Source: RMDB library OK1LIB, as collected in RNAgym. Structure probing data (2A3) for a 177-nucleotide construct. For 2A3, 515 sequencing reads were counted. 2A3 adducts were read by reverse transcription with SuperScript II with manganese. The reactions ran in a buffer of 150 mM KOAc, 10 mM MgCl2 and 150 mM bicine (pH 8.5), at 24 C.

RNA sequence: GGGAACGACUCGAGUAGAGUCGAAAAGUAGUCGGAAUGGCGGUUCUGUUUUUACGCCUCCCGACCUCCUUCCUGCCGGAAGAAGAUCAGGGAGUAUUCCUGACCAUGAUUCAGCUCCCCUCUGGCGCCCGAGCAGGGCGUUCGCGCCCUGCUCGGGAAAAGAAACAACAACAACAAC
Reactivity to 2A3 in 0.01 (KOAc 150mM, MgCl2 10mM, bicine 150mM(pH8.5), 24C), signal-to-noise 1, nucleotides 027 to 126: g110u160a030g000u000c010g000g070a280a160u080g070g010c010g000g000u090u200c110u140g240u080u150u020u050u010a080c040g000c000c000u010c030c000c000g010a000c020c020u030c050c000u000u010c030c000u010g110c000c020g080g020a080a060g010a060a090g010a260u040c090a030g000g000g000a010g120u020a170u060u170c000c000u010g050a010c000c050a260u130g020a170u040u040c000a000g000c000u020c000c010c030c000u010c020u020g000g000c000g050